[RMDB]
The record gives the reactivity of an RNA of 177 nucleotides to DMS.
The DMS profile rests on 2,716 reads.
Source: RMDB library OK2TRN, as collected in RNAgym.
Reactivities are given for positions 27 through 126.
RNA sequence: GGGAACGACUCGAGUAGAGUCGAAAAAGCACGCUAGUGGGAUGACCUUGGAUAAGCCUGACAUGUCUGGUUGAAAGUCUUGUGUGUUUGAGAUUGGUCUGGGCUUGGUAUAUUGACCAGGGGGCUGACCUCCCUAGUUGUUCGCAACUAGGGAGGUAAAAGAAACAACAACAACAAC
Reactivity to DMS in 0.01 (KOAc 150mM, MgCl2 10mM, bicine 150mM(pH8.5), 24C), signal-to-noise 2, nucleotides 027 to 126: a040g010c060a040c070g030c060u000a040g030u000g010g000g020a090u010g010a070c050c040u010u000g020g010a110u010a060a090g000c040c020u000g000a060c060a070u010g010u010c050u000g010g020u000u010g000a060a100a060g020u010c060u020u000g000u000g020u010g010u000u000u010g000a070g000a090u000u000g010g010u000c020u000g010g000g010c050u000u010g000g020u000a130u010a110u010u000g000a090c010c020a060g000g010g010g000g000c240u010g000